[RMDB]
An RNA of 207 nucleotides, treated with 2A3 and DMS and read out base by base. For DMS, 1,654 sequencing reads were counted. It was measured as part of the RMDB library OK3TST.
RNA sequence: GGGAACGACUCGAGUAGAGUCGAAAAUAUAUCAGAAGAUGAUUGUGAAAAUUAAAUGAGAGUCAACCACUCACCUUAGGGUUGAAUAUGUGAUAGUCACAUAUUCAUGUCAAUUCUGCUUCCUUUCAAAAGGAAUAUAUAAAGGAACUUUAUUAACCGUAAAGUACUGGUUCGCCAGUACUUUACGAAAAGAAACAACAACAACAAC
Reactivity to 2A3 in 0.01 (KOAc 150mM, MgCl2 10mM, bicine 150mM(pH8.5), 24C), signal-to-noise 2, nucleotides 027 to 156: u100a000u020a040u030c040a040g030a090a070g110a170u120g010a040u230u090g050u060g090a060a160a100a140u170u130a130a090a140u200g030a020g010a010g060u080c030a010a020c000c020a040c060u020c000a090c000c020u030u080a060g100g000g000u030u030g000a000a000u000a000u000g000u000g050a160u110a140g160u240c000a000c000a000u020a010u010u000c010a030u030g080u040c030a040a120u090u010c010u040g080c030u010u000c010c000u020u030u120c120a170a200a000a000g000g000a030a010u110a000u030a010u090a050a040a050g030g000a010a010c000u080u130u070a070u130u100a160a030c050
Reactivity to DMS in 0.01 (KOAc 150mM, MgCl2 10mM, bicine 150mM(pH8.5), 24C), signal-to-noise 1, nucleotides 027 to 156: u010a070u030a120u000c030a090g010a090a210g000a120u000g000a110u010u010g010u000g000a080a130a120a170u000u010a030a100a150u000g010a140g010a060g030u000c030a140a090c020c080a150c050u010c020a060c030c020u010u030a130g040g000g030u000u000g020a080a010u000a000u010g010u000g040a230u000a160g020u000c050a000c030a020u000a030u000u000c000a050u000g000u030c070a090a140u000u000c050u000g000c130u000u000c010c010u000u010u030c130a060a050a100a120g020g020a060a030u010a040u000a140u020a050a080a100g000g000a020a100c040u000u000u000a090u000u010a080a120c120